[RMDB]
RNA sequence: GGGAACGACUCGAGUAGAGUCGAAAAACGCUUCACAAUGUGCGGCAAAGAAACAUUGUUUAUGCAAAGGCACUUCGCAAUGUGGGCUCAAACAUUGCUUAUUCAAACACGCUUCACAAUGUGCGACAAAACUUCACGGUCUUCGGACCGUGAAGAACUUCUACCCCUCGUUCGCGAGGGGUAGAAGAAAAGAAACAACAACAACAAC
Reactivity to 2A3 in 0.01 (KOAc 150mM, MgCl2 10mM, bicine 150mM(pH8.5), 24C), signal-to-noise 2, nucleotides 027 to 156: a010c010g000c010u010u000c020a010c040a020a140u010g000u030g010c000g080g060c080a130a100a070g060a000a030a000c010a000u020u000g050u030u160u110a040u060g000c020a030a060a050g180g000c040a040c080u080u080c060g030c020a010a030u010g000u050g040g060g000c040u040c170a070a070a020c000a030u040u000g000c000u110u070a170u210u140c070a010a050a040c050a020c120g090c050u140u160c050a030c070a080a140u190g010u020g060c010g030a030c040a010a140a030a020c000u000u000c000a000c000g000g000u000c000u020u080c150g070g000a020c020c000g000u000g000a000a000g000a000a000